[RMDB]
RNA sequence: GGGAACGACUCGAGUAGAGUCGAAAAACAGAGCAUUUUUGAUCUAGCAGAAAUACAAGACCACGUUGUAUUUGUCUUUGCAAUAAUCUCUUAGCUAGGAAUACUGAUCACCUGUAGACAGAUAAGACCUCAUACCUAUCUUCGGAUAGGUAUGAGGAAAAGAAACAACAACAACAAC
Reactivity to DMS in 0.01 (KOAc 150mM, MgCl2 10mM, bicine 150mM(pH8.5), 24C), signal-to-noise 3, nucleotides 027 to 126: a090c080a080g010a080g000c070a060u010u010u010u010u000g010a140u020c030u010a090g000c030a090g000a030a030a030u000a000c050a030a020g010a140c120c100a080c180g010u000u000g010u000a020u000u000u000g000u010c040u010u010u000g030c020a050a070u010a080a060u000c040u000c050u000u000a060g010c030u000a050g010g010a130a080u000a060c050u000g000a090u000c070a060c080c020u010g010u010a030g000a060c100a060g000a090u020a080a100g010a130
Reactivity to 2A3 in 0.01 (KOAc 150mM, MgCl2 10mM, bicine 150mM(pH8.5), 24C), signal-to-noise 2, nucleotides 027 to 126: a000c020a010g040a030g070c050a100u010u000u010u090u120g100a090u030c020u050a030g050c010a000g080a070a070a020u040a020c010a010a020g030a080c020c070a050c150g060u030u020g020u010a040u020u030u080g060u000c050u060u110u070g030c020a040a100u090a100a080u020c010u020c000u170u090a010g000c010u020a010g000g080a050a040u070a120c010u050g050a130u080c010a030c110c000u030g080u080a020g030a060c030a000g050a040u090a130a030g070a090
Background:
This 177-nucleotide RNA was probed chemically with DMS and 2A3. For 2A3, 1,671 sequencing reads were counted. The RNA was probed in 150 mM KOAc, 10 mM MgCl2 and 150 mM bicine (pH 8.5) at 24 C. The data come from the RNA Mapping Database (RMDB), library OK2TST.